[RMDB]
RNA sequence: GGGAACGACUCGAGUAGAGUCGAAAAUUGUUUAACUUGUGGACAAAGACUUAUGGAUAGGUGCAAAAAAUAAAUCCUCUUUUGCAACCCAGAACUCAUUGUUCAGUAUGAGUUUUGAUACAUAUAAGAAGGGAUAUUAUGAUACCUGAGACAGUUACUAGGAUAUCACUUUCGAGUGAUAUCCUAGAAAAGAAACAACAACAACAAC
Reactivity to DMS in 0.01 (KOAc 150mM, MgCl2 10mM, bicine 150mM(pH8.5), 24C), signal-to-noise 1, nucleotides 027 to 156: u000u000g040u010u010u010a050a070c050u010u000g020u010g020g010a190c050a060a100a120g010a090c020u000u050a100u000g010g010a060u000a050g010g020u000g010c020a030a030a120a000a050a050u030a020a030a170u000c010c020u000c050u020u000u010u000g030c020a080a080c150c050c030a090g020a000a050c010u000c010a020u000u000g040u000u000c170a150g000u020a040u010g000a020g030u000u000u000u020g000a100u010a030c020a060u000a120u000a020a090g010a040a040g020g040g030a250u000a060u000u000a100u000g010a090u010a070c030c020u000g020a170g020a080c070a150g000u000u000a130
Reactivity to 2A3 in 0.01 (KOAc 150mM, MgCl2 10mM, bicine 150mM(pH8.5), 24C), signal-to-noise 2, nucleotides 027 to 156: u080u010g040u030u050u020a070a040c020u090u030g010u080g070g040a020c030a050a060a010g070a020c030u110u050a070u090g100g030a070u100a080g040g000u020g020c030a040a050a000a000a000a050u060a020a080a020u060c030c010u080c020u020u040u020u050g010c030a070a240c000c050c000a000g000a000a000c000u000c000a010u020u080g080u300u110c070a030g070u060a050u030g000a000g000u020u020u000u030g060a070u060a070c010a050u080a020u050a120a000g060a040a020g030g000g010a010u010a100u100u050a060u080g040a030u070a120c010c020u020g010a030g030a040c050a040g030u040u030a020
Source information:
Source: RMDB library OK3TST, as collected in RNAgym. An RNA of 207 nucleotides, treated with DMS and 2A3 and read out base by base. 2A3 adducts were read by reverse transcription with SuperScript II with manganese. High 2A3 reactivity points to a flexible backbone, as in loops and unpaired stretches. For DMS, 2,188 sequencing reads were counted. For DMS the reverse transcriptase was MarathonRT.